[RMDB]
RNA sequence: GGGAACGACUCGAGUAGAGUCGAAAAAGGAGCUUGAGGAGCUGUGUGUAUUGUGUGCACAUGUACUUGUGUGUGGUGUAUAUAACUCUGGGAAUGUAACUGUGCAUGCAUGCAUGUAAUUGAGUAUAACCAUGCAUAUGUAAUGUGUUAUAUGUGACCGCUACACCUAGUUCGCUAGGUGUAGCGGAAAAGAAACAACAACAACAAC
Reactivity to 2A3 in 0.01 (KOAc 150mM, MgCl2 10mM, bicine 150mM(pH8.5), 24C), signal-to-noise 2, nucleotides 027 to 156: a030g040g000a010g000c040u010u010g020a020g020g020a010g040c060u020g050u020g010u000g010u030a090u080u150g000u030g080u030g070c000a070c000a000u080g070u210a020c010u060u010g030u000g000u000g000u000g080g000u030g090u040a030u020a000u010a140a090c030u010c040u040g000g020g160a140a020u080g060u110a030a090c120u090g000u020g050c030a020u030g020c000a040u090g010c020a000u010g010u130a090a040u170u080g070a030g030u050a000u010a070a000c000c020a000u010g000c000a000u020a040u140g040u030a040a090u010g020u000g030u060u040a030u000a010u130g100u060g070a050

Source: RMDB library OK3TST, as collected in RNAgym. Chemical mapping of a 207-nucleotide RNA with 2A3. Values cover nucleotides 27 to 156. The reactions ran in a buffer of 150 mM KOAc, 10 mM MgCl2 and 150 mM bicine (pH 8.5), at 24 C.